[RMDB]
RNA sequence: GGGAACGACUCGAGUAGAGUCGAAAACAUGUCACAGAACGUUUACUCUGGGCCUUGUGGGCACUAGGUGGGAGUGUGGGAGUGUGGUAAAACCCAGGUUUUCCUACAGAGGAGCUACUGCUGCCUUUUCCACAAUCGAAGAACAGCAUUAUUAUAAGAUAUGAUCGUCGUUCGCGACGAUCAUAUCAAAAGAAACAACAACAACAAC
Reactivity to 2A3 in 0.01 (KOAc 150mM, MgCl2 10mM, bicine 150mM(pH8.5), 24C), signal-to-noise 1, nucleotides 027 to 156: c000a060u060g020u060c020a020c010a270g050a080a070c180g000u120u070u120a160c040u010c010u030g000g030g000c010c000u070u050g080u000g030g020g030c020a050c090u030a060g070g000u000g030g090g030a080g020u140g030u080g050g000g010a070g080u100g030u030g080g060u080a000a000a060a060c040c040c000a000g000g040u000u040u000u080c000c000u060a120c080a010g000a000g100g000a070g030c020u080a030c030u100g070c050u020g000c000c030u050u020u020u010c030c030a130c040a020a020u200c150g160a120a090g050a100a010c020a050g130c020a020u040u180a040u150u220a050u250a230a000